RNA sequence: GGGAACGACUCGAGUAGAGUCGAAAAGGAGGUCCCGAGGAGUAUCCAAGCAAAGAAGGGGAAGGAUCUCGAGGAAGACAUCUCCCAAGAAGAAGCGGGAACAAUCUCAAGAAGAGGAGGAUUCCCCCAAUACCUGUCUCUUCGGAGACAGGUAUUGAAAAGAAACAACAACAACAAC
Reactivity to DMS in 0.01 (KOAc 150mM, MgCl2 10mM, bicine 150mM(pH8.5), 24C), signal-to-noise 2, nucleotides 027 to 126: g020g000a050g000g020u000c010c010c010g000a110g010g000a110g010u000a060u020c050c010a170a200g000c120a080a100a130g010a120a060g010g000g010g030a110a160g000g010a020u010c020u000c010g000a220g010g010a120a060g010a080c070a090u010c040u000c000c000c030a100a110g010a150a060g010a030a050g010c140g000g010g000a010a020c110a090a070u030c040u000c070a080a140g010a080a120g000a030g010g010a060g030g010a260u000u000c020c000c000c020
Reactivity to 2A3 in 0.01 (KOAc 150mM, MgCl2 10mM, bicine 150mM(pH8.5), 24C), signal-to-noise 1, nucleotides 027 to 126: g020g000a010g000g050u000c020c010c000g000a070g080g000a040g030u130a020u000c040c060a080a050g100c050a130a130a150g130a100a070g100g020g000g020a100a050g020g020a020u000c020u020c070g050a050g000g020a120a050g000a000c010a050u030c030u020c020c020c000a000a070g040a030a000g040a050a000g070c040g010g000g020a000a000c000a060a080u010c010u000c030a000a070g070a100a030g010a100g060g020a010g080g000a060u020u010c060c000c010c000